[RMDB]
RNA sequence: GGGAACGACUCGAGUAGAGUCGAAAAGAUAUGGAGAAGAAUAGUCUUGGAUUUAUAGCGAAGUCGGAAACGACUAGCUAUUGUCAGACUUCUCUUCUCCUAAGUCAAAGCUAGGUUCGCCUAGCAAGACGAUAACCCAGUUCGCUGGGUUAUCGUCAAAAGAAACAACAACAACAAC
Reactivity to DMS in 0.01 (KOAc 150mM, MgCl2 10mM, bicine 150mM(pH8.5), 24C), signal-to-noise 1, nucleotides 027 to 126: g030a030u000a300u000g000g010a000g000a000a040g020a040a130u000a020g060u000c000u020u000g030g060a030u010u000u020a000u000a000g000c000g000a160a210g000u000c000g020g000a180a150a210c000g010a020c010u010a270g010c000u000a000u000u000g000u000c000a030g000a020c000u000u000c140u000c000u000u010c000u000c000c020u000a020a100g010u000c020a120a100a300g000c000u000a000g000g030u000u030c230g030c010c000u000a000g010c000a030a030
Reactivity to 2A3 in 0.01 (KOAc 150mM, MgCl2 10mM, bicine 150mM(pH8.5), 24C), signal-to-noise 1, nucleotides 027 to 126: g030a010u120a060u210g010g010a040g010a010a020g000a000a000u020a050g000u000c050u080u260g080g060a110u300u300u080a030u050a030g010c020g050a170a010g040u020c010g030g000a080a130a070c000g020a000c010u010a010g000c000u000a000u010u000g000u000c000a040g000a040c000u030u040c090u010c000u010u000c000u010c020c010u000a100a010g000u010c050a000a040a180g030c000u000a000g040g080u040u060c300g100c040c010u000a010g050c030a020a010
An RNA of 177 nucleotides, treated with DMS and 2A3 and read out base by base.
For 2A3 the reverse transcriptase was SuperScript II with manganese.
The reactions ran in a buffer of 150 mM KOAc, 10 mM MgCl2 and 150 mM bicine (pH 8.5), at 24 C.
For 2A3, 1,348 sequencing reads were counted.
For DMS, 655 sequencing reads were counted.
As a SHAPE reagent, 2A3 marks flexible, mostly unpaired nucleotides at the ribose 2'-OH.